[RMDB]
RNA sequence: GGGAACGACUCGAGUAGAGUCGAAAAGCGUCAAGGCCCUGUGCUGCUGUCCCUGGGGGCCAGAGGGGUUGCCCAGCAUGCCCACUGGCAGGAGAGAGGGAACUGACCCACUUGCUCCUACCAGCUUCUGAAGGUAAAAUCCUUACAAACGAGGAGAGAGUAUUAGGCUAUUCGUAGCCUAAUACUCAAAAGAAACAACAACAACAAC
Reactivity to 2A3 in 0.01 (KOAc 150mM, MgCl2 10mM, bicine 150mM(pH8.5), 24C), signal-to-noise 4, nucleotides 027 to 156: g010c010g070u050c050a060a150g040g010c000c000c000u030g070u140g040c040u040g010c020u020g040u090c020c000c000u010g040g040g000g010g000c000c010a010g090a010g020g050g030g000u100u120g080c020c010c020a020g020c020a010u170g020c000c020c000a040c040u020g000g000c000a010g010g010a010g000a000g020a010g030g010g000a070a080c130u110g140a100c030c000c000a080c020u050u200g040c010u000c000c000u010a040c010c010a020g000c000u110u040c030u070g040a040a020g000g000u060a050a030a020a120u030c010c000u040u010a090c140a060a200a010c090g030a030g060g020a040g000a010
Reactivity to DMS in 0.01 (KOAc 150mM, MgCl2 10mM, bicine 150mM(pH8.5), 24C), signal-to-noise 2, nucleotides 027 to 156: g050c060g020u010c050a070a130g030g010c020c040c040u000g040u000g020c000u000g000c000u000g060u000c000c010c020u000g010g070g000g010g080c030c020a080g010a110g000g030g040g020u000u010g010c010c050c070a220g040c040a120u010g010c000c030c300a100c030u000g010g040c000a050g000g000a110g000a090g030a040g000g000g000a100a150c090u000g000a230c030c010c020a080c060u000u010g000c030u000c010c000u010a100c010c000a040g010c030u010u000c040u000g020a140a070g000g000u000a050a070a090a140u010c010c010u010u010a300c070a060a090a200c100g000a050g000g000a070g010a210